[RMDB]
RNA sequence: GGGAACGACUCGAGUAGAGUCGAAAAAUGAUUAGAGCUUGCAGGACUGAUAGUUGUUCUGGGUGAGUCAGUGAGUGGUGAGUGAAUGUGAAGGCCUAGGGCAUUAAUGUACACUUUUGUACAAGUAGCACAGUAGGUUUGUUUACACCAACAUCAAAAUUACCUAGCAUUUCGAUGCUAGGUAAUUAAAAGAAACAACAACAACAAC
Reactivity to 2A3 in 0.01 (KOAc 150mM, MgCl2 10mM, bicine 150mM(pH8.5), 24C), signal-to-noise 4, nucleotides 027 to 156: a000u080g010a030u070u080a080g020a000g060c030u070u070g030c080a030g000g060a040c030u060g050a080u070a100g070u070u030g030u050u020c040u030g010g030g010u060g010a030g020u020c040a020g010u020g100a020g020u030g010g010u010g030a050g020u060g050a070a060u090g020u030g040a060a010g020g000c020c020u030a020g010g050g000c010a010u030u150a110a080u080g010u020a010c040a030c050u090u140u250u160g010u010a000c000a010a030g060u050a010g040c040a010c020a120g080u070a030g040g000u050u050u060g040u040u060u030a030c030a010c050c020a040a070c000a060u110c050a000a150
Reactivity to DMS in 0.01 (KOAc 150mM, MgCl2 10mM, bicine 150mM(pH8.5), 24C), signal-to-noise 4, nucleotides 027 to 156: a110u010g020a110u010u010a080g010a120g010c030u000u010g020c060a080g030g010a090c030u000g000a100u000a060g000u000u000g010u010u000c040u000g050g010g030u000g000a110g010u000c030a100g030u000g010a110g030u000g020g030u000g010a110g010u000g020a060a060u000g010u000g010a090a070g010g020c030c020u010a080g010g030g020c060a110u000u010a040a130u010g020u000a010c010a040c290u000u000u000u010g040u000a040c040a030a090g020u000a110g010c030a030c040a100g020u000a060g000g020u000u000u010g010u000u000u000a110c050a050c030c010a040a080c080a090u000c070a040a070